[RMDB]
RNA sequence: GGGAACGACUCGAGUAGAGUCGAAAAUUUCGAUAUACUGAUCCCUGGCAGAUUAGACCUACAUGGGGGUUGUACACUUCUGUUUUUUUCAGUGUUGUGAAAUGAACCUGGCUCUGUAGAAAUGGACUUGCAUCAUAACCUUAGAUAAGCUAAGGAGGUAUAGGAACUUAUUCGUAAGUUCCUAUACAAAAGAAACAACAACAACAAC
Reactivity to DMS in 0.01 (KOAc 150mM, MgCl2 10mM, bicine 150mM(pH8.5), 24C), signal-to-noise 2, nucleotides 027 to 156: u000u000u000c050g010a130u000a100u000a090c000u000g010a070u000c000c030c030u000g000g000c060a070g010a160u010u000a130g010a200c060c040u000a060c070a060u000g010g030g010g020g020u000u020g050u010a070c060a020c040u000u010c050u000g000u000u000u000u000u000u000u000c030a060g030u000g010u010u000g000u000g000a060a080a050u000g010a060a100c040c050u000g000g010c020u000c070u000g000u000a070g010a040a080a090u020g030g000a130c040u000u000g030c060a040u000c070a100u010a090a120c000c010u000u000a030g020a200u010a080a210g000c000u000a020a040g000g000a050g010
Reactivity to 2A3 in 0.01 (KOAc 150mM, MgCl2 10mM, bicine 150mM(pH8.5), 24C), signal-to-noise 2, nucleotides 027 to 156: u080u110u100c010g010a020u030a010u030a210c050u100g080a090u100c000c000c000u020g020g020c010a010g040a070u090u100a010g060a170c040c020u030a040c090a170u120g010g000g110g020g000u030u060g000u080a030c030a030c080u080u030c020u010g110u020u050u050u010u020u050u220c070a050g010u020g020u090u070g050u010g070a060a080a090u050g010a000a020c010c010u000g030g000c010u060c030u130g080u100a030g050a050a040a050u050g000g020a000c030u030u030g020c040a050u040c010a050u090a120a070c000c000u030u000a010g010a010u110a160a060g060c010u010a010a000g040g020a010g050